Background: Chemical mapping of a 177-nucleotide RNA with DMS and 2A3. It was measured as part of the RMDB libraries RFM100 and RFMREP.
[RMDB]
RNA sequence: GGGAACGACUCGAGUAGAGUCGAAAACAGUUUUGUCAUUUUGAUGAAAUUUCAUCCUAUCCUUAGUUCCAAAACCGCUCCAAUGACUUCCUUUUUAUUGAUUUUUCCUUUUCUUUCCUUGGUUUAGUAUACUUAGCUCAUUCGUGAGCUAAGUAUAAAAAGAAACAACAACAACAAC
Reactivity to DMS in 0.01 (KOAc 150mM, MgCl2 10mM, bicine 150mM(pH8.5), 24C), signal-to-noise 6, nucleotides 027 to 126: c150a050g010u000u000u000u000g020u010c010a130u020u020u030u020g020a030u010g000a010a050a040u000u010u000c100a080u010c010c010u000a070u020c030c030u010u010a090g010u000u000c020c010a040a040a110a100c060c040g000c060u000c030c020a050a070u010g000a070c050u000u000c020c000u000u010u010u020u020a100u030u010g010a080u000u000u000u000u000c010c010u000u000u010u000c030u000u000u000c020c020u000u020g020g010u010u010u010a090g020
Reactivity to 2A3 in 0.01 (KOAc 150mM, MgCl2 10mM, bicine 150mM(pH8.5), 24C), signal-to-noise 9, nucleotides 027 to 126: c030a010g010u010u020u050u030g040u020c040a130u050u130u200u300g030a030u040g030a020a060a060u080u080u060c030a050u030c010c010u050a080u050c010c010u060u060a030g040u070u060c020c000a020a030a060a090c020c030g020c030u010c010c020a040a080u080g030a060c000u040u040c010c000u030u050u040u050u090a130u050u100g070a080u040u040u010u050u060c000c000u050u060u040u020c010u020u050u030c010c010u030u060g060g000u120u110u000a050g050
DMS (dimethyl sulfate) methylates the pairing face of unpaired adenines and cytosines. For 2A3 the reverse transcriptase was SuperScript II with manganese. Conditions: 150 mM KOAc, 10 mM MgCl2 and 150 mM bicine (pH 8.5), 24 C.